[RMDB]
RNA sequence: GGGAACGACUCGAGUAGAGUCGAAAAGUAUCCCUAGAUGAUAAAACACCGCACAUGGCCCGUAAGAGCGGUUAAAUUAGCAAGUAAUGCAAAUUACGCGAGGUAACGCAUGGCCUAGGCUCGUUAGAAAAGGGAGAAUCCUUCGGGAUUCUCCCAACAUAACCAUACUCUUCGGAGUAUGGUUAUGAAAAGAAACAACAACAACAAC
Reactivity to 2A3 in 0.01 (KOAc 150mM, MgCl2 10mM, bicine 150mM(pH8.5), 24C), signal-to-noise 2, nucleotides 027 to 156: g040u080a100u040c000c000c000u020a100g060a190u140g020a050u190a120a130a060a020c040a010c000c050g020c020a070c030a140u060g030g000c030c010c040g000u020a110a040g010a000g060c000g020g010u010u050a020a070a040u040u070a010g010c020a010a100g120u120a180a020u100g030c050a060a000a060u100u070a030c010g010c020g000a030g050g070u060a030a010c000g000c080a050u100g010g000c000c000u000a020g020g000c020u010c050g040u050u040a050g150a120a100a090a040g000g000g000a010g000a000a000u000c000c000u020u070c140g000g000g000a000u000u000c000u000c010c010c000a000a000
Reactivity to DMS in 0.01 (KOAc 150mM, MgCl2 10mM, bicine 150mM(pH8.5), 24C), signal-to-noise 3, nucleotides 027 to 156: g030u010a150u010c020c010c010u000a080g020a150u010g000a150u000a060a100a080a150c030a070c000c050g000c030a170c040a100u000g020g030c000c000c040g000u000a070a090g000a210g010c020g030g030u000u000a020a040a140u000u000a110g030c040a110a150g020u000a070a110u010g000c090a060a070a080u000u000a030c010g010c030g010a120g010g020u000a080a070c010g000c020a100u010g020g010c020c000u000a100g010g020c010u000c090g020u000u000a140g020a050a070a110a130g010g030g020a050g030a010a010u000c000c000u000u000c280g050g030g010a010u000u000c000u000c000c000c000a010a000
Background: This 207-nucleotide RNA was probed chemically with 2A3 and DMS. The data come from the RNA Mapping Database (RMDB), library M2RFPK. 2A3 adducts were read by reverse transcription with SuperScript II with manganese. Values cover nucleotides 27 to 156. The DMS profile rests on 5,723 reads.